RNA sequence: GGGAACGACUCGAGUAGAGUCGAAAAGUGUAUAGGCUUUCCGAGACCCCGCCUAUACACGAGUUAGGGGGUCAGGUCAUGUUAUGCUGGCUAUCUUACGUGUGCACCGAAGGGCUGCGGGUGCACACGAAUCUUACGCAGCCCAUUGCCAGCUAGAGCACUAAUUUACGUUCGCGUAAAUUAGUGCAAAAGAAACAACAACAACAAC
Reactivity to 2A3 in 0.01 (KOAc 150mM, MgCl2 10mM, bicine 150mM(pH8.5), 24C), signal-to-noise 1, nucleotides 027 to 156: g030u000g010u000a010u000a030g000g030c020u110u150u080c060c120g070a100g060a110c020c020c020c020g020c010c000u000a000u000a010c000a000c000g000a020g100u260u200a100g000g050g000g000g000u040c030a030g110g040u070c050a030u120g020u100u200a010u140g040c000u000g000g000c040u020a030u120c080u030u170a110c020g000u010g000u000g000c000a000c010c010g070a120a080g000g030g000c000u000g000c000g070g000g030u000g000c000a000c000a000c000g000a000a000u050c000u070u160a030c030g000c000a000g000c000c010c010a010u000u130g010c000c000a000g000c070u050a080g000a030